[RMDB]
Chemical mapping of a 177-nucleotide RNA with 2A3.
For 2A3, 1,066 sequencing reads were counted.
It was measured as part of the RMDB library OK1LIB.
Conditions: 150 mM KOAc, 10 mM MgCl2 and 150 mM bicine (pH 8.5), 24 C.
For 2A3 the reverse transcriptase was SuperScript II with manganese.
RNA sequence: GGGAACGACUCGAGUAGAGUCGAAAACAAAAACAAACGCGAACGAGCAAAGAAGAAAAACCAGCACCAAAGGCUAAGAAAGCCAAAAGGAAGCUGGGCUCGAACAGCCAACGCGAUGGCAACAAAAGCGACAUGUACUGUUCGCAGUACAUGUCGCAAAAGAAACAACAACAACAAC
Reactivity to 2A3 in 0.01 (KOAc 150mM, MgCl2 10mM, bicine 150mM(pH8.5), 24C), signal-to-noise 1, nucleotides 027 to 126: c040a030a080a020a000a020c160a010a100a010c070g010c000g070a110a000c030g010a010g020c030a010a150a000g220a080a000g130a020a080a000a000a020c000c010a000g010c000a010c000c000a000a040a130g000g000c020u030a040a070g140a300a160a030g040c040c000a000a000a000a000g060g000a180a000g000c000u000g010g000g000c000u000c000g000a030a030c100a050g000c000c000a000a070c010g000c010g100a120u030g040g000c030a080a050c010a000a100a000a030